An RNA of 177 nucleotides, treated with 2A3 and DMS and read out base by base. The RNA was probed in 150 mM KOAc, 10 mM MgCl2 and 150 mM bicine (pH 8.5) at 24 C. DMS adducts were read by reverse transcription with MarathonRT. For 2A3, 3,224 sequencing reads were counted.
RNA sequence: GGGAACGACUCGAGUAGAGUCGAAAAUCGUAAUCCGGUGCUGUGUGUGGUACCUGGUUUGGAUACCAGAGAGGUUAGGAGACAGCUUCUAAAGAUUUAUCUUGGCGAGGGGAAACCCAGGGUAGCUGUAUUUUUAGAACUUCGGUUCUAAAAAUACAAAAGAAACAACAACAACAAC
Reactivity to 2A3 in 0.01 (KOAc 150mM, MgCl2 10mM, bicine 150mM(pH8.5), 24C), signal-to-noise 4, nucleotides 027 to 126: u090c030g020u050a050a000u010c020c030g010g010u030g000c010u020g010u080g040u040g040u100g120g030u050a040c000c000u010g030g040u000u020u100g120g010a050u070a080c010c030a010g040a000g010a030g170g000u080u100a020g020g020a020g020a040c020a050g060c000u020u000c010u080a070a100a030g020a030u090u120u090a100u100c010u030u050g020g000c050g060a070g050g040g000g000a040a040a010c000c000c020a020g030g010g010u010a030g030c050u010
Reactivity to DMS in 0.01 (KOAc 150mM, MgCl2 10mM, bicine 150mM(pH8.5), 24C), signal-to-noise 2, nucleotides 027 to 126: u000c050g040u000a070a040u040c040c030g000g000u010g010c050u000g000u010g040u000g000u000g010g010u010a030c050c000u010g020g000u000u030u040g000g020a080u020a090c040c010a070g000a150g030a090g010g020u010u000a050g000g000a090g000a100c090a100g010c030u010u000c040u000a060a090a090g010a070u030u020u010a060u000c000u020u000g000g000c090g010a080g000g010g000g000a070a070a090c080c020c000a070g010g000g010u010a040g010c120u020